[RMDB]
RNA sequence: GGGAACGACUCGAGUAGAGUCGAAAAGCUCUGAUUCACGUGGCAGAGCAGAAAACACGUGACAAGCUGAUGUCGAUAAGAUAUCAGCAGUGAGCCAGACAUACGAUACGUAUGUCUGGCUCACGAAACCACCUAUCGUCUUCGGACGAUAGGUGGUAAAAGAAACAACAACAACAAC
Reactivity to 2A3 in 0.01 (KOAc 150mM, MgCl2 10mM, bicine 150mM(pH8.5), 24C), signal-to-noise 1, nucleotides 027 to 126: g010c000u000c000u000g120a140u030u070c000a010c090g020u010g040g050c000a040g010a040g140c060a010g190a040a010a000a000c000a000c000g000u020g040a010c010a020a050g000c020u000g000a000u000g000u000c000g050a100u100a300a090g000a000u000a000u000c000a000g010c000a000g000u000g050a000g000c000c000a000g000a020c000a000u040a000c000g300a300u170a300c170g000u000a000u000g000u050c000u000g010g000c000u000c000a000c000g000a010a000